[RMDB]
RNA sequence: GGGAACGACUCGAGUAGAGUCGAAAAACAUCUCUGCUUGCAUGAAUAUUUUUCAAAAUGCUCCAUAGACCUAGAAGCUGAAAUGGAAAGUUAGAAUCAUUCAAACACAAAUUUUGAUUUUAUUCCUUUGAGAGAUGGUAGGUGAUUGGCAUGAAAAGGUAUUAUUAGGAUUCGUCCUAAUAAUACCAAAAGAAACAACAACAACAAC
Reactivity to DMS in 0.01 (KOAc 150mM, MgCl2 10mM, bicine 150mM(pH8.5), 24C), signal-to-noise 3, nucleotides 027 to 156: a060c020a050u000c010u000c010u010g010c040u000u000g010c050a110u000g000a110a110u010a050u010u000u000u030u010c060a050a080a150a130u010g010c040u000c030c040a140u000a180g000a110c080c050u010a100g000a050a040g010c020u000g000a030a060a110u000g010g010a050a040a090g020u000u010a050g030a100a080u010c030a070u010u000c080a060a090a070c080a230c080a050a070a190u000u010u000u000g000a070u000u000u000u010a100u030u010c000c030u000u010u010g000a130g000a070g000a030u000g010g020u000a060g030g030u010g010a120u000u000g000g010c010a040u000g010a060a070a080a220
Reactivity to 2A3 in 0.01 (KOAc 150mM, MgCl2 10mM, bicine 150mM(pH8.5), 24C), signal-to-noise 3, nucleotides 027 to 156: a000c010a020u020c010u000c020u060g080c030u080u050g020c020a110u090g040a130a000u090a100u080u130u030u050u030c030a060a110a030a040u040g010c010u000c030c010a050u050a050g030a100c010c030u050a050g030a140a020g070c010u040g040a070a070a060u030g020g000a070a040a020g010u060u090a050g040a030a020u040c030a040u140u120c060a090a150a050c070a020c020a140a110a070u060u110u040u040g000a010u000u010u010u060a040u030u050c020c000u020u070u110g020a050g000a010g000a020u010g020g040u040a030g000g030u020g030a100u040u080g020g010c070a050u000g070a030a000a030a050
Chemical mapping of a 207-nucleotide RNA with DMS and 2A3. Reactivities are given for positions 27 through 156. Conditions: 150 mM KOAc, 10 mM MgCl2 and 150 mM bicine (pH 8.5), 24 C. The DMS profile rests on 4,512 reads. 2A3 adducts were read by reverse transcription with SuperScript II with manganese. For DMS the reverse transcriptase was MarathonRT.